[RMDB]
The record gives the reactivity of an RNA of 207 nucleotides to 2A3 and DMS. The reactions ran in a buffer of 150 mM KOAc, 10 mM MgCl2 and 150 mM bicine (pH 8.5), at 24 C. The data come from the RNA Mapping Database (RMDB), library RSTRND.
RNA sequence: GGGAACGACUCGAGUAGAGUCGAAAAUCUCUAGCAAGGUGCCUGUAUCGCGCUAUAGACUGUCAACUAGAACAGGAUCGUAAAGCGGCACACUCAGGGUUGUUUUACUAAACUUAACUGAGAUCGCCAACCACGUCCUGCCCGUUGGGCUAAAAAAGACAUGCAUAUUGUUCGCAAUAUGCAUGUCAAAAGAAACAACAACAACAAC
Reactivity to 2A3 in 0.01 (KOAc 150mM, MgCl2 10mM, bicine 150mM(pH8.5), 24C), signal-to-noise 5, nucleotides 027 to 156: u020c010u000c010u030a020g030c060a140a080g060g010u030g020c000c040u120g050u120a130u110c070g000c010g000c080u040a070u030a100g070a060c050u050g010u110c030a060a030c080u060a040g020a060a030c010a000g000g020a060u230c060g030u020a070a010a020g040c030g000g000c010a020c000a020c030u010c000a010g010g000g050u110u010g040u010u060u010u080a180c180u190a050a030a020c010u130u280a030a010c000u010g010a000g000a100u090c030g000c010c030a020a020c020c030a010c020g020u010c000c000u020g010c000c020c000g050u050u070g030g000g000c070u120a100a040a030a010a020a000
Reactivity to DMS in 0.01 (KOAc 150mM, MgCl2 10mM, bicine 150mM(pH8.5), 24C), signal-to-noise 2, nucleotides 027 to 156: u000c030u000c020u000a070g020c000a100a110g020g030u000g020c010c030u000g020u000a070u000c060g000c070g000c050u000a140u010a070g030a070c040u020g000u010c000a050a080c020u010a050g020a090a180c020a030g000g020a030u000c050g010u000a040a090a150g010c040g020g020c010a060c160a210c050u000c010a070g030g000g000u010u000g020u000u020u000u000a160c110u000a030a020a040c010u000u000a130a170c040u000g000a020g010a100u010c170g010c030c010a090a110c020c080a050c000g000u000c010c000u010g030c030c010c040g000u010u000g040g020g040c030u020a000a040a100a080a110a160